Chemical mapping of a 177-nucleotide RNA with 2A3 and DMS. Reactivities are given for positions 27 through 126. For 2A3, 1,905 sequencing reads were counted. DMS adducts were read by reverse transcription with MarathonRT. The DMS profile rests on 2,191 reads.
RNA sequence: GGGAACGACUCGAGUAGAGUCGAAAAUGUCCCAGUUUCGACUGGGACAAAACCAUGAGGAGGAUCAAAGAUCAAAGCCGUCGCUCAUGCGUAAAGACGGCAAAAGGCUAGUGUUCGCACUAGCCAAUCAAAAUUGAUGGUUCGCCAUCAAUUUUGAAAAAGAAACAACAACAACAAC
Reactivity to 2A3 in 0.01 (KOAc 150mM, MgCl2 10mM, bicine 150mM(pH8.5), 24C), signal-to-noise 1, nucleotides 027 to 126: u070g000u000c010c000c000a000g000u020u020u120c190g090a020c020u010g020g000g000a010c000a000a040a000a000c000c000a030u090g020a010g090g060a010g000g060a020u060c100a280a130a170g050a000u010c010a010a000a150g030c000c010g020u020c030g020c010u080c030a060u190g030c000g070u050a050a050a030g020a000c020g000g030c010a010a020a010a000g000g000c000u000a000g000u000g020u060u040c160g000c070a010c000u000a000g000c000c000a050a000
Reactivity to DMS in 0.01 (KOAc 150mM, MgCl2 10mM, bicine 150mM(pH8.5), 24C), signal-to-noise 3, nucleotides 027 to 126: u010g020u000c000c000c010a040g000u010u000u000c150g000a020c010u000g000g020g010a000c010a000a040a050a170c020c010a120u000g010a030g000g010a070g010g010a030u000c040a090a090a150g010a080u000c060a160a050a150g010c000c000g010u000c000g000c050u000c050a050u000g020c190g000u010a040a020a170g020a000c010g000g010c040a010a010a120a040g010g010c000u000a000g030u000g010u000u010c210g000c000a010c000u000a010g000c000c000a000a010